[RMDB]
RNA sequence: GGGAACGACUCGAGUAGAGUCGAAAAUCCGUCCGGGCCCUCUUCGCCGGGGGAGCCCCCUCUCCAUCCCUGUCCUUCUUUCCGAGUAUUCCUUUGAUGUUUCCCAGCCAGGGAUUUUCGACCUCAAACACGUUCCCGUUCGCGGGAACGAAAAGAAACAACAACAACAAC
Reactivity to 2A3 in 0.01 (KOAc 150mM, MgCl2 10mM, bicine 150mM(pH8.5), 24C), signal-to-noise 2, nucleotides 027 to 129: u020c010c000g020u030c060c000g000g000g020c020c010c000u050c060u140u060c050g000c020c030g000g000g000g020g000a040g000c010c010c000c030c000u000c000u020c040c010a070u000c050c000c000u010g040u060c010c000u020u050c000u020u030u020c000c000g030a030g000u040a030u070u000c010c000u040u030u140g070a050u110g060u010u020u000c010c010c000a000g020c020c010a020g000g000g050a000u000u010u030u030c020g010a030c000c000u020c000a030a090a020c070a000
Reactivity to DMS in 0.01 (KOAc 150mM, MgCl2 10mM, bicine 150mM(pH8.5), 24C), signal-to-noise 1, nucleotides 027 to 129: u020c040c030g010u040c120c150g000g000g000c000c060c000u020c090u050u060c070g000c110c060g080g030g000g000g000a210g040c050c000c000c080c040u030c070u020c000c000a180u040c000c000c010u000g050u020c010c010u000u000c070u000u000u000c010c030g020a150g060u040a120u000u030c020c020u000u070u040g070a070u000g000u010u020u030c040c010c000a150g010c070c080a050g000g000g000a000u140u010u000u000c030g010a040c050c040u040c040a040a100a080c240a170